[RMDB]
RNA sequence: GGGAACGACUCGAGUAGAGUCGAAAAGAAGCCGAAGCAACUUCAGGUCGCCGCGCACGAACUGGCGCUCGAUCUCCGCCUCGCUCGAGUAGGUUUCCCGGGGGAUGCCUCUUCGAGCCCUUGCCACCAUACAGGAAAGUCACGUAGAGUAUUCCGGCCCAAGAUGAUGGUUCGCCAUCAUCUUGGGAAAAGAAACAACAACAACAAC
Reactivity to 2A3 in 0.01 (KOAc 150mM, MgCl2 10mM, bicine 150mM(pH8.5), 24C), signal-to-noise 2, nucleotides 027 to 156: g050a020a000g050c150c150g170a080a010g020c040a010a080c000u050u000c000a000g000g010u010c010g000c110c100g000c050g020c000a190c230g110a300a150c290u300g080g000c000g000c000u000c000g030a040u000c040u060c030c010g000c000c000u000c000g000c000u000c000g010a000g020u040a050g050g030u050u070u020c000c010c020g040g000g020g010g000a010u000g020c000c060u000c000u050u070c020g030a040g020c010c000c000u050u090g060c000c010a130c010c010a040u130a300c070a030g100g030a240a110a010g060u180c060a020c160g030u020a000g020a000g020u020a050u050u000c030c060g100g020
The record gives the reactivity of an RNA of 207 nucleotides to 2A3.
Values cover nucleotides 27 to 156.
For 2A3 the reverse transcriptase was SuperScript II with manganese.
Source: RMDB library VIROID, as collected in RNAgym.